[RMDB]
RNA sequence: GGGAACGACUCGAGUAGAGUCGAAAAGCAAUCUUCGGAUUGCAAAAUGGUAUUGUCGGCGUAAAAGAACAAGACGUCACCGGACGCGACCGGGCUAAAAAGCGAAAAAGCUUGCCUUCGGGCAAGCACCCAUCAUGUUGUUCGCAACAUGAUGGGUAAAAGAAACAACAACAACAAC
Reactivity to 2A3 in 0.01 (KOAc 150mM, MgCl2 10mM, bicine 150mM(pH8.5), 24C), signal-to-noise 1, nucleotides 027 to 126: g000c000a020a000u000c010u010u090c170g150g000a000u000u020g000c000a000a000a000a110u170g020g070u160a120u090u160g190u110c040g000g050c010g020u020a040a120a150a090g100a200a060c130a130a040g090a020c000g000u050c010a000c020c000g000g010a030c020g010c000g000a020c000c000g000g010g000c000u020a050a020a000a000a020g020c020g010a130a000a000a000a030g000c000u000u000g000c000c000u050u030c170g080g000g000c000a000a000g000c000
Reactivity to DMS in 0.01 (KOAc 150mM, MgCl2 10mM, bicine 150mM(pH8.5), 24C), signal-to-noise 1, nucleotides 027 to 126: g010c000a000a010u000c000u000u020c140g040g000a050u000u000g000c000a020a030a060a030u040g000g010u000a080u010u000g030u000c050g020g010c020g000u010a030a050a130a080g000a170a140c130a140a080g000a060c020g010u010c050a100c000c000g010g000a090c010g010c010g020a070c000c010g000g000g010c300u010a020a030a040a010a030g030c010g010a130a060a050a030a130g010c000u000u000g000c000c000u000u000c220g010g030g030c000a000a000g010c030